[RMDB]
RNA sequence: GGGAACGACUCGAGUAGAGUCGAAAAGAAAGGCAGCCACUGCAGCCCACGUAGCCACUCGAAGCAUGCUUUUGCAUGCCGCCCACGACUGAGGGCAGCUGCGGCACUGAGGGCAGCUGCCGAAAGAGGGCAUACGAUACUUCGGUAUCGUAUGCCCAAAAGAAACAACAACAACAAC
Reactivity to 2A3 in 0.01 (KOAc 150mM, MgCl2 10mM, bicine 150mM(pH8.5), 24C), signal-to-noise 1, nucleotides 027 to 126: g130a060a130a000g020g000c020a000g040c080c060a170c120u160g040c070a020g030c040c040c000a020c060g030u000a000g000c000c000a090c020u040c040g100a080a020g000c010a020u020g000c000u100u280u220u300g000c010a000u010g000c050c000g000c010c010c000a120c050g280a040c050u040g020a160g000g060g000c000a000g030c050u070g000c020g040g020c040a040c150u160g020a150g010g090g000c000a000g000c000u000g000c000c000g030a000a010a010g120a060
Reactivity to DMS in 0.01 (KOAc 150mM, MgCl2 10mM, bicine 150mM(pH8.5), 24C), signal-to-noise 1, nucleotides 027 to 126: g000a070a120a120g020g000c060a040g010c020c060a170c110u010g030c080a090g010c140c070c010a080c160g000u020a100g020c000c080a050c040u000c060g020a200a140g010c010a000u000g000c000u000u110u000u000g000c010a010u000g000c000c020g000c000c020c010a040c120g010a140c270u010g010a070g020g000g020c000a020g000c030u000g000c020g000g000c100a060c070u000g000a090g040g000g040c000a070g000c000u000g020c000c000g080a020a020a100g010a140